RNA sequence: GGGAACGACUCGAGUAGAGUCGAAAAUGUAACCGCCAAAUUGUGCAAACUCUGCGGUUUAAUUGUGGAAUUGGCACAACGUUGCUCAAAGGUUUUUCAACCCCACGUUUUCUCGAGCAUCGCAGCAGGCAGGACUAUUAUUCGUAAUAGUCCUGCCAAAAGAAACAACAACAACAAC
Reactivity to 2A3 in 0.01 (KOAc 150mM, MgCl2 10mM, bicine 150mM(pH8.5), 24C), signal-to-noise 3, nucleotides 027 to 126: u290g030u050a050a050c010c000g040c070c000a030a080a160u120u050g030u040g020c010a030a000a020c010u020c010u020g010c000g000g140u070u140u180a160a140u060u100g000u030g020g000a040a030u030u040g070g000c000a000c000a010a110c070g050u030u040g000c000u090c010a060a100a130g010g000u020u000u030u010u100c070a050a100c080c000c030c040a120c040g030u000u000u040u050c070u100c100g010a020g030c020a060u050c010g080c080a040g000c020a000
Reactivity to DMS in 0.01 (KOAc 150mM, MgCl2 10mM, bicine 150mM(pH8.5), 24C), signal-to-noise 1, nucleotides 027 to 126: u010g000u030a040a080c140c020g000c020c250a070a050a200u030u000g000u000g040c060a040a080a030c050u000c000u000g010c000g020g030u000u030u010a010a010u010u060g000u050g000g010a050a010u000u000g000g020c070a010c030a080a070c040g010u000u000g000c050u000c100a030a040a030g000g000u000u020u000u000u000c110a060a130c020c000c000c000a100c120g000u000u000u040u010c020u000c040g000a000g020c070a080u000c100g030c130a120g090c090a150
The data come from the RNA Mapping Database (RMDB), library OK1LIB.
An RNA of 177 nucleotides, treated with 2A3 and DMS and read out base by base.
2A3 adducts were read by reverse transcription with SuperScript II with manganese.
Values cover nucleotides 27 to 126.
As a SHAPE reagent, 2A3 marks flexible, mostly unpaired nucleotides at the ribose 2'-OH.
The RNA was probed in 150 mM KOAc, 10 mM MgCl2 and 150 mM bicine (pH 8.5) at 24 C.
For DMS, 1,522 sequencing reads were counted.